[RMDB]
RNA sequence: GGGAACGACUCGAGUAGAGUCGAAAAGAUAUGGAGUUGGUCAGCGACGAAGUAUGGAACUACUCGGAAACGAGCCAUACAGAGCUGGAGAGACUCCUAAGUCAAAACAGCGCGUUCGCGCGCUGAACGUACAUGCAAGGUUCGCCUUGCAUGUACGAAAAGAAACAACAACAACAAC
Reactivity to 2A3 in 0.01 (KOAc 150mM, MgCl2 10mM, bicine 150mM(pH8.5), 24C), signal-to-noise 3, nucleotides 027 to 126: g040a000u030a050u120g000g000a000g030u030u020g060g140u160c000a010g000c000g280a300c060g040a300a020g010u000a000u010g000g000a140a110c110u300a100c010u280c000g030g000a030a060a010c000g000a020g000c000c000a000u010a000c000a020g040a020g000c020u000g020g020a170g020a000g010a060c000u000c010c000u000a030a010g020u050c020a000a020a100a170c010a010g000c000g000c000g030u080u180c230g000c030g000c000g050c170u010g000a030a000
Reactivity to DMS in 0.01 (KOAc 150mM, MgCl2 10mM, bicine 150mM(pH8.5), 24C), signal-to-noise 3, nucleotides 027 to 126: g010a040u000a290u010g010g000a020g010u000u000g000g030u000c000a020g020c010g000a120c180g010a090a070g010u010a010u000g020g000a110a050c160u020a300c030u010c030g010g010a070a100a160c020g000a000g020c000c000a000u010a000c000a040g010a110g000c000u000g000g000a040g000a300g020a010c020u000c000c010u010a010a060g000u000c050a060a090a100a180c020a000g020c000g010c000g020u000u010c270g010c000g010c000g010c000u010g000a030a080

Structure probing data (2A3 and DMS) for a 177-nucleotide construct. DMS adducts were read by reverse transcription with MarathonRT. The reactions ran in a buffer of 150 mM KOAc, 10 mM MgCl2 and 150 mM bicine (pH 8.5), at 24 C. The 2A3 profile rests on 5,022 reads. Source: RMDB library TTRDEL, as collected in RNAgym.